[RMDB]
RNA sequence: GGGAACGACUCGAGUAGAGUCGAAAAGGCCAAAGAAAUGAAUUCACUCAGUCCAGGACCUAUCAUCGAUUACCACGUCUGGAUAGGAGAUUGUGUCUGUCAAGUUACUGCUGUAGACGUACAUGGAAAGGAAAUUAUGAGAAUGAGAUUCAAAAAGAUGACCAGUGAAUUUCGAUUCACUGGUCAUAAAAGAAACAACAACAACAAC
Reactivity to DMS in 0.01 (KOAc 150mM, MgCl2 10mM, bicine 150mM(pH8.5), 24C), signal-to-noise 2, nucleotides 027 to 156: g000g010c040c030a030a060a070g020a140a070a070u000g030a050a120u000u000c120a100c060u000c010a080g010u000c020c020a100g030g000a170c020c020u000a070u000c040a070u000c080g030a190u000u000a090c080c070a050c060g010u000c040u010g020g000a040u000a080g000g000a110g000a080u000u010g020u000g020u000c020u000g000u000c040a040a050g020u000u000a050c070u000g010c020u000g070u000a060g000a080c060g000u000a070c070a060u000g010g010a110a140a170g000g000a070a080a080u010u000a090u000g000a100g000a060a110u000g000a130g020a170u000u000c020a040a020a080a120a230g000
Reactivity to 2A3 in 0.01 (KOAc 150mM, MgCl2 10mM, bicine 150mM(pH8.5), 24C), signal-to-noise 2, nucleotides 027 to 156: g040g000c060c030a020a030a040g110a020a070a110u150g020a000a030u090u070c030a030c030u020c010a030g060u030c020c000a040g000g040a060c020c010u010a010u030c020a010u040c030g070a060u050u100a130c060c080a020c080g000u000c050u060g050g020a010u000a020g010g030a040g010a030u080u130g050u020g030u070c010u020g080u100c040a050a050g040u030u050a090c070u100g000c010u040g020u080a020g030a010c000g000u000a010c010a050u070g010g030a080a000a080g030g030a050a040a040u190u100a050u220g050a030g040a030a070u090g010a050g030a040u090u050c040a120a020a100a070a010g140